This 177-nucleotide RNA was probed chemically with 2A3 and DMS. For DMS the reverse transcriptase was MarathonRT. The DMS profile rests on 14,740 reads. The RNA was probed in 150 mM KOAc, 10 mM MgCl2 and 150 mM bicine (pH 8.5) at 24 C.

RNA sequence: GGGAACGACUCGAGUAGAGUCGAAAAGCCGCGAGGAUCAGGCCAGCGCGGUACGGCGCAGCGCGGCCGCGCCGUACGGCCGAGGCGCAUGCUCUGAUCCGUAGUACAGUAGCUCGGCCGGCCACUGGCCAUGUAAACGAUUCGUCGUUUACAUGGCAAAAGAAACAACAACAACAAC
Reactivity to 2A3 in 0.01 (KOAc 150mM, MgCl2 10mM, bicine 150mM(pH8.5), 24C), signal-to-noise 4, nucleotides 027 to 126: g080c010c010g050c050g060a080g000g000a010u000c000a010g020g020c050c070a030g000c050g000c060g070g000u010a010c000g010g000c020g000c030a040g020c300g030c080g300g010c010c010g000c010g000c000c000g010u030a020c020g050g040c060c030g010a070g020g000c030g000c030a040u100g000c010u010c010u240g020a010u000c010c010g000u010a020g040u040a010c050a020g050u110a020g030c010u010c060g040g000c030c000g020g020c020c020a050c040u080g070
Reactivity to DMS in 0.01 (KOAc 150mM, MgCl2 10mM, bicine 150mM(pH8.5), 24C), signal-to-noise 6, nucleotides 027 to 126: g010c010c020g000c120g010a170g010g010a010u000c010a010g000g010c120c100a120g000c130g020c010g010g010u000a010c010g000g000c010g030c010a050g010c040g020c210g020g000c010c020g010c010g010c000c000g010u000a000c000g010g020c050c060g000a110g010g000c020g000c050a120u000g010c050u010c010u000g000a010u000c010c010g010u010a070g010u010a110c110a060g020u000a070g010c040u000c030g000g010c030c020g010g000c020c030a060c080u000g010

Source: RMDB library OK2TRN, as collected in RNAgym.